[RMDB]
RNA sequence: GGGAACGACUCGAGUAGAGUCGAAAAAAAAGAUAUGGACUGAAUACCCUCUUGGAUUUACACAUACAGUAGGUCGGAAACGACCUACCGAGGUGUGUUGUCAGAGGAAUUCAGUCCUAAGUCAAAACAAUGAAAGCUAGUUCGCUAGCUUUCAUUGAAAAGAAACAACAACAACAAC
Reactivity to DMS in 0.01 (KOAc 150mM, MgCl2 10mM, bicine 150mM(pH8.5), 24C), signal-to-noise 3, nucleotides 027 to 126: a080a070a070a100g000a050u000a300u010g010g000a020c000u010g000a020a010u000a080c290c000c000u000c010u000u000g040g010a020u010u000u010a010c000a010c000a020u000a010c020a030g000u000a000g010g020u010c000g010g000a070a070a180c020g010a000c010c000u000a000c000c000g030a260g010g000u000g000u000g010u000u000g020u000c010a020g020a020g010g000a150a020u010u000c000a020g010u000c010c000u000a010a080g030u000c040a090a050a080a230
Reactivity to 2A3 in 0.01 (KOAc 150mM, MgCl2 10mM, bicine 150mM(pH8.5), 24C), signal-to-noise 1, nucleotides 027 to 126: a000a000a000a060g050a030u070a030u090g020g000a000c000u000g010a020a010u160a210c020c020c020u000c020u080u110g070g010a020u300u160u280a020c000a010c000a010u080a040c010a000g000u000a000g010g000u000c010g010g000a070a130a040c020g020a000c000c020u000a000c000c010g010a040g060g000u020g010u000g000u000u010g000u000c010a000g010a010g020g000a000a000u020u000c010a000g000u000c000c000u010a000a000g000u010c000a000a020a030a060